Chemical mapping of a 177-nucleotide RNA with 2A3 and DMS. The reactions ran in a buffer of 150 mM KOAc, 10 mM MgCl2 and 150 mM bicine (pH 8.5), at 24 C. DMS adducts were read by reverse transcription with MarathonRT.
RNA sequence: GGGAACGACUCGAGUAGAGUCGAAAACUGGCACAUGGGAGAAGUAUGCGUGUCCAAUGUAGAUAACCAUUGGCGACCUUCGAGAAUAUCGUCAUUUGCUUUUACCAUUAGUUCGCGGGCGGUCGCCCUCCUCGGUACCGUUCGCGGUACCGAGGAGAAAAGAAACAACAACAACAAC
Reactivity to 2A3 in 0.01 (KOAc 150mM, MgCl2 10mM, bicine 150mM(pH8.5), 24C), signal-to-noise 2, nucleotides 027 to 126: c030u000g040g010c070a020c010a060u020g060g030g000a110g040a090a050g090u160a020u160g100c080g030u090g030u000c000c030a070a050u080g020u090a070g040a280u070a120a010c040c020a010u040u060g040g010c010g050a020c020c020u050u060c010g040a090g030a120a030u110a040u100c020g120u070c030a170u080u080u250g020c030u020u070u040u130a050c000c030a080u010u120a010g090u020u050c020g000c030g060g060g060c040g090g050u050c040g020c010c000
Reactivity to DMS in 0.01 (KOAc 150mM, MgCl2 10mM, bicine 150mM(pH8.5), 24C), signal-to-noise 1, nucleotides 027 to 126: c050u010g000g030c060a050c090a060u050g020g010g000a100g000a040a060g020u000a010u000g010c110g000u000g000u010c030c020a010a050u010g000u000a140g030a120u000a110a090c110c070a110u000u000g010g000c060g000a030c050c030u000u000c050g010a120g000a030a050u010a050u010c070g010u010c070a040u000u000u010g010c080u010u000u000u000a140c000c000a070u020u000a070g020u000u000c050g010c000g000g000g000c070g000g000u000c060g000c050c020